RNA sequence: GGGAACGACUCGAGUAGAGUCGAAAAUAGAUACUCAAUGCCAGCUGAGCUUCCCCACUCUAAGUACUCCCAGUGGAAGUUUAAACUGUUUAGGGUGAGGUGCACCACCAUGGAGAUCUAACCUCCAGGCAUUCGAUACCUUCGGGUAUCGAAUGCCAAAAGAAACAACAACAACAAC
Reactivity to 2A3 in 0.01 (KOAc 150mM, MgCl2 10mM, bicine 150mM(pH8.5), 24C), signal-to-noise 1, nucleotides 027 to 126: u090a000g070a010u040a100c000u060c060a060a070u070g000c070c000a000g020c120u090g020a000g000c000u040u140c000c000c000c000a000c000u000c000u000a020a010g010u010a050c080u020c010c050c060a050g040u090g030g000a020a020g000u000u000u220a230a110a020c030u050g040u210u020u130a030g010g000g010u000g000a030g020g010u000g010c030a000c000c000a000c000c080a050u080g010g020a010g000a040u000c000u030a060a050c000c020u000c040c010a000